[RMDB]
RNA sequence: GGGAACGACUCGAGUAGAGUCGAAAACAGUGUCGGUAUUCCACUGGAAGGCUUGGCCUUUAUUGCCGGCGUUGAUCGUAUUCUGGAUAUGGCGCGUACUGCACUGAAUGUGGUAGGGAAUGCAUUAACUAGAGAUGGGUUUCGACCCAUCUCUAGUAAAAGAAACAACAACAACAAC
Reactivity to 2A3 in 0.01 (KOAc 150mM, MgCl2 10mM, bicine 150mM(pH8.5), 24C), signal-to-noise 2, nucleotides 027 to 126: c020a030g000u000g040u090c030g010g000u040a070u130u070c060c070a070c120u130g110g000a020a010g050g010c110u140u220g180g050c020c000u070u040u070a200u070u110g010c000c010g020g070c010g010u040u070g050a120u080c030g040u140a090u110u110c030u090g140g000a040u050a070u120g080g000c020g010c000g000u020a060c040u020g000c020a000c040u030g100a120a070u140g010u060g050g040u070a070g060g000g000a080a090u090g030c010a100u070u060a050
Reactivity to DMS in 0.01 (KOAc 150mM, MgCl2 10mM, bicine 150mM(pH8.5), 24C), signal-to-noise 4, nucleotides 027 to 126: c050a040g000u000g010u010c030g010g000u010a060u010u010c050c040a080c110u000g010g000a040a050g010g000c020u010u020g040g010c020c070u000u000u000a050u020u010g000c000c000g020g000c020g020u010u000g000a090u010c080g010u000a090u000u000c060u010g000g000a140u000a060u000g000g020c080g010c070g010u000a060c060u010g010c050a050c070u000g000a070a230u000g020u010g020g010u000a030g010g010g000a060a060u010g010c080a080u000u000a050